[RMDB]
RNA sequence: GGGAACGACUCGAGUAGAGUCGAAAAGAAAGAAAUCAAAGCGGAUUGAUCUACGAAUAACUCGUUCACUAAUCGGAAGUGAGUGAUCCAAUAUCCGUAUUAGAUGUAACUGAGCGUUGAGUAGAAAGGGAAUCAUAGAGUUCGCUCUAUGAUUCCCAAAAGAAACAACAACAACAAC
Reactivity to 2A3 in 0.01 (KOAc 150mM, MgCl2 10mM, bicine 150mM(pH8.5), 24C), signal-to-noise 2, nucleotides 027 to 126: g090a000a000a000g090a020a100a040u130c130a070a010a120g130c130g090g000a040u060u140g060a020u010c000u010a020c000g070a040a020u050a110a050c000u000c000g020u000u000c000a000c010u000a000a010u030c000g020g000a020a020g070u030g260a060g020u100g060a050u010c010c010a040a040u060a050u090c000c000g010u030a000u000u000a020g140a180u000g010u160a000a010c040u190g000a000g010c070g050u020u020g040a060g020u070a030g050a000a020a070
Reactivity to DMS in 0.01 (KOAc 150mM, MgCl2 10mM, bicine 150mM(pH8.5), 24C), signal-to-noise 2, nucleotides 027 to 126: g000a060a060a120g000a120a090a040u000c040a080a100a120g050c040g010g000a030u000u000g020a150u020c000u040a020c010g000a210a050u030a070a070c030u000c000g030u000u000c000a040c000u000a000a020u000c050g000g000a010a080g040u070g040a020g030u060g000a090u000c030c010a020a130u020a100u000c020c030g060u100a040u000u000a010g000a070u000g000u020a030a060c030u070g000a020g000c050g000u000u000g000a220g010u000a020g020a060a130a100
Background
The record gives the reactivity of an RNA of 177 nucleotides to 2A3 and DMS. DMS (dimethyl sulfate) methylates the pairing face of unpaired adenines and cytosines. For 2A3 the reverse transcriptase was SuperScript II with manganese. As a SHAPE reagent, 2A3 marks flexible, mostly unpaired nucleotides at the ribose 2'-OH. Values cover nucleotides 27 to 126. The RNA was probed in 150 mM KOAc, 10 mM MgCl2 and 150 mM bicine (pH 8.5) at 24 C. It was measured as part of the RMDB library OK1LIB.